[RMDB]
RNA sequence: GGGAACGACUCGAGUAGAGUCGAAAAGCGUUACGCGAAAUGGUGGCCUCUCCGCAUGUUGAGCUGGCAGUGCAUUUAUUUGCUGAUUUAGCCCUCGCCACGUCAUUUCUCGGCGUUGCGUUAGGCAUACUGCCCCAUUAUUCGUAAUGGGGCAGUAAAAAGAAACAACAACAACAAC
Reactivity to DMS in 0.01 (KOAc 150mM, MgCl2 10mM, bicine 150mM(pH8.5), 24C), signal-to-noise 5, nucleotides 027 to 126: g010c050g010u000u000a060c100g050c040g020a040a050a050u000g010g030u000g010g000c020c040u000c030u000c030c070g030c150a080u000g010u010u010g000a060g020c140u000g010g010c030a080g020u000g010c070a050u000u000u010a130u030u000u000g010c020u000g020a150u000u010u010a130g020c010c020c080u000c060g010c000c040a030c020g000u020c000a100u000u000u000c150u000c120g010g000c020g030u000u000g010c010g010u010u000a050g020g010c070a220
Reactivity to 2A3 in 0.01 (KOAc 150mM, MgCl2 10mM, bicine 150mM(pH8.5), 24C), signal-to-noise 3, nucleotides 027 to 126: g030c030g060u090u110a060c090g000c040g040a030a000a040u140g060g020u050g100g000c000c000u040c000u000c020c040g090c130a140u160g050u120u090g050a030g030c060u050g020g020c010a000g030u050g060c040a030u030u040u140a200u130u130u160g000c030u050g060a190u050u060u250a040g000c010c000c000u000c010g020c010c010a010c010g030u010c020a040u080u220u050c130u070c100g060g030c010g010u010u010g000c000g000u030u110a060g020g000c010a020
The record gives the reactivity of an RNA of 177 nucleotides to DMS and 2A3. The DMS profile rests on 6,322 reads. For 2A3, 2,900 sequencing reads were counted. DMS adducts were read by reverse transcription with MarathonRT. For 2A3 the reverse transcriptase was SuperScript II with manganese. High DMS reactivity at an A or C suggests that its Watson-Crick edge is free. Reactivities are given for positions 27 through 126. Conditions: 150 mM KOAc, 10 mM MgCl2 and 150 mM bicine (pH 8.5), 24 C. Reactivities are rounded to 0.1 and cut off at 0 and 3.